[RMDB]
RNA sequence: GGGAACGACUCGAGUAGAGUCGAAAAAUAUUUGGUGAGAUAAGAGAGAUGUCCCCUGAUGCGCUUAAGGAUGAUCCAGAGCUGUCCAAGACAGAGAGGGAGGUUCUUGGAAUCAUAUCUCAGAUUCCCACGGUACAUCAUUCGUGAUGUACCGUGGAAAAGAAACAACAACAACAAC
Reactivity to DMS in 0.01 (KOAc 150mM, MgCl2 10mM, bicine 150mM(pH8.5), 24C), signal-to-noise 2, nucleotides 027 to 126: a030u070a070u030u000u030g000g010u000g000a080g020a040u030a040a100g020a070g010a080g000a050u040g000u010c020c000c030c000u010g010a160u010g000c100g000c020u010u030a050a040g010g000a130u010g000a090u040c050c020a060g020a090g010c040u000g020u000c020c070a060a140g000a140c070a040g000a150g020a030g000g020g000a270g020g020u000u000c080u000u000g000g000a050a070u030c040a050u000a040u000c000u010c010a100g000a110u000u010c070
Reactivity to 2A3 in 0.01 (KOAc 150mM, MgCl2 10mM, bicine 150mM(pH8.5), 24C), signal-to-noise 4, nucleotides 027 to 126: a000u220a110u110u090u130g090g040u070g020a070g010a030u110a150a060g070a010g030a010g020a100u090g080u090c030c000c000c000u050g050a080u070g010c100g030c080u060u140a100a000g000g000a030u070g000a020u000c030c020a050g010a040g100c040u060g050u090c020c000a020a090g030a050c060a010g180a010g000a020g110g060g010a060g060g020u040u010c000u000u110g030g030a020a030u030c010a020u030a060u040c040u020c020a040g040a120u050u080c020
Notes:
Conditions: 150 mM KOAc, 10 mM MgCl2 and 150 mM bicine (pH 8.5), 24 C. The record gives the reactivity of an RNA of 177 nucleotides to DMS and 2A3. For 2A3, 2,728 sequencing reads were counted. Values are in units of 0.01, from 0 to 300, in steps of 10.